The record gives the reactivity of an RNA of 207 nucleotides to 2A3 and DMS. Values cover nucleotides 27 to 156. The RNA was probed in 150 mM KOAc, 10 mM MgCl2 and 150 mM bicine (pH 8.5) at 24 C. DMS adducts were read by reverse transcription with MarathonRT.
RNA sequence: GGGAACGACUCGAGUAGAGUCGAAAAGGGGUCUCUCCCGAUAAGCGUACAAGGGAGCGAAGAACUACACUGAAGCCUCCACGGUGUAGGGAGCUCCCGACGCUUUUGACGGGAGAGACGGAGGCACCCAAAAACAUAGUACUUCGGUACUAUGUAAUCAUCAAGAUCUGUUCGCAGAUCUUGAUGAAAAAGAAACAACAACAACAAC
Reactivity to 2A3 in 0.01 (KOAc 150mM, MgCl2 10mM, bicine 150mM(pH8.5), 24C), signal-to-noise 2, nucleotides 027 to 156: g050g010g050g020u010c000u010c000u010c000c000c000g040a060u150a160a020g000c000g020u080a070c190a300a240g000g000g010a010g020c010g080a180a030g000a010a000c000u000a010c000a000c010u050g020a110a020g000c010c000u010c020c000a020c000g040g000u010g010u000a000g010g000g020a000g000c000u000c000c010c000g000a000c000g000c020u030u080u080u130g090a020c010g000g000g000a000g020a010g000a000c000g000g010a000g020g000c000a020c000c010c010a070a040a050a000a000c010a000u010a000g020u000a000c020u040u030c300g070g000u000a000c000u000a000u000g000u000a010a090
Reactivity to DMS in 0.01 (KOAc 150mM, MgCl2 10mM, bicine 150mM(pH8.5), 24C), signal-to-noise 1, nucleotides 027 to 156: g000g020g050g020u000c000u010c020u000c010c010c010g030a060u000a010a060g050c010g070u000a120c120a130a120g020g020g010a010g030c000g010a080a230g020a140a190c010u020a020c000a050c000u030g000a040a050g000c050c010u010c000c020a300c040g000g030u000g040u000a030g010g000g000a100g020c020u000c000c020c030g010a000c000g000c050u000u010u020u010g010a170c020g000g000g000a050g000a000g020a000c010g000g000a050g020g040c010a100c000c010c020a040a040a120a210a070c030a010u000a020g030u000a010c000u000u000c300g000g040u010a010c000u000a020u000g010u000a100a110